RNA sequence: GGGAACGACUCGAGUAGAGUCGAAAAAAGGGUGCUGAGUGCUCCGCCUGUACCUGCAUGCCAUAGGAGGCCAUCAGAGCCUGUUCUAGAUGGUGGGGAGCUGGGAAUUGAACUCAGCCGUCAGUGCGAAAUGUGUUUCUUUCGAGAAACACAUUUCAAAAGAAACAACAACAACAAC
Reactivity to 2A3 in 0.01 (KOAc 150mM, MgCl2 10mM, bicine 150mM(pH8.5), 24C), signal-to-noise 4, nucleotides 027 to 126: a020a000g090g010g030u080g000c020u050g050a080g080u100g020c010u010c020c010g050c010c010u060g060u100a080c020c000u010g080c050a060u150g040c000c000a000u020a010g000g050a000g000g060c010c010a190u160c070a030g040a060g090c010c030u090g050u140u050c010u010a080g000a180u040g000g020u070g020g010g000g020a070g000c050u030g020g020g040a120a120u130u120g020a110a040c000u010c010a010g000c010c020g110u070c030a040g050u030g070c020
Reactivity to DMS in 0.01 (KOAc 150mM, MgCl2 10mM, bicine 150mM(pH8.5), 24C), signal-to-noise 6, nucleotides 027 to 126: a060a100g000g010g020u010g020c020u010g010a080g020u000g010c040u000c040c110g000c050c010u000g000u010a100c060c030u000g010c090a060u000g000c060c060a090u000a050g000g020a080g020g010c050c010a130u010c130a130g010a140g010c070c030u000g000u000u000c020u000a070g000a080u000g000g030u000g000g010g010g010a160g010c020u000g000g000g000a110a150u010u000g000a130a110c010u000c000a010g010c020c060g020u000c040a080g010u000g010c190